[RMDB]
RNA sequence: GGGAACGACUCGAGUAGAGUCGAAAAGGCCACCUUCUUCUUGGCGAUUCUGUUUGCUAUAGUUGUGAAGCUGGGGAUGAGAAGUACUCCUGGUUCUACUUACCUUCGGGAGUAUAUCUGGAUAGGGAUGCACGAUGGAAUUCGUUCCAUCGUGCAUAAAAGAAACAACAACAACAAC
Reactivity to 2A3 in 0.01 (KOAc 150mM, MgCl2 10mM, bicine 150mM(pH8.5), 24C), signal-to-noise 1, nucleotides 027 to 126: g100g000c030c000a030c100c000u000u000c010u020u000c000u000u040g000g030c000g060a070u170u220c000u150g170u090u200u260g010c050u060a020u100a120g020u050u170g070u010g100a010a000g030c020u010g000g000g030g000a030u080g100a000g050a170a100g000u000a000c020u000c000c010u060g010g010u060u010c010u010a120c110u120u150a010c030c000u060u140c090g010g000g010a020g050u000a000u000a010u000c000u070g040g000a110u080a040g010g020g000
Reactivity to DMS in 0.01 (KOAc 150mM, MgCl2 10mM, bicine 150mM(pH8.5), 24C), signal-to-noise 2, nucleotides 027 to 126: g000g010c050c030a090c060c020u000u010c000u000u010c030u000u010g000g000c040g000a100u000u040c000u010g030u010u010u000g000c020u000a080u050a070g000u030u000g000u030g000a070a040g010c020u000g000g000g000g010a100u050g000a100g010a060a300g000u000a000c020u000c000c000u020g000g000u020u000c190u000a070c130u030u010a060c060c080u020u010c070g050g030g000a010g010u000a030u000a020u000c000u050g040g040a100u010a050g000g000g000

The record gives the reactivity of an RNA of 177 nucleotides to 2A3 and DMS. The 2A3 profile rests on 576 reads. The data come from the RNA Mapping Database (RMDB), library OK1LIB. The reactions ran in a buffer of 150 mM KOAc, 10 mM MgCl2 and 150 mM bicine (pH 8.5), at 24 C. For 2A3 the reverse transcriptase was SuperScript II with manganese. DMS adducts were read by reverse transcription with MarathonRT. The DMS profile rests on 3,409 reads.